[RMDB]
RNA sequence: GGGAACGACUCGAGUAGAGUCGAAAAGAUAUGGAUGUGGUGGAGCGUAGCUGCUCUAUAAUCCCGCUUCCUCGGAAACGAGGAAGCGGGGUAGAGCUGCUACGCGUCGAAGCCACAUCCUAAGUCAGUUUAAGAAUAUGUUCGCAUAUUCUUAAACAAAAGAAACAACAACAACAAC
Reactivity to 2A3 in 0.01 (KOAc 150mM, MgCl2 10mM, bicine 150mM(pH8.5), 24C), signal-to-noise 3, nucleotides 027 to 126: g040a030u100a070u190g010g000a000u000g000u010g010g040u030g010g040a040g010c010g010u000a000g000c030u020g010c000u010c030u020a030u050a050a110u090c010c010c000g010c000u010u000c000c000u000c020g040g060a180a150a100c020g000a020g010g000a010a000g010c000g000g000g020g000u000a010g000a010g010c000u000g000c010u000a000c000g000c000g000u170c000g000a010a000g010c010c000a010c000a000u000c000c000u000a040a010g040u010c050a030
Reactivity to DMS in 0.01 (KOAc 150mM, MgCl2 10mM, bicine 150mM(pH8.5), 24C), signal-to-noise 6, nucleotides 027 to 126: g010a070u010a300u010g000g020a010u000g010u000g000g020u000g010g010a080g010c000g020u000a010g010c010u000g010c010u000c000u000a050u010a300a180u010c010c000c000g020c000u000u000c000c000u000c010g020g010a140a120a210c000g000a020g000g000a010a000g010c010g000g000g010g010u000a010g000a010g010c000u000g000c000u010a000c010g000c000g010u000c150g000a210a290g000c000c000a000c000a010u000c000c000u000a020a090g010u000c050a150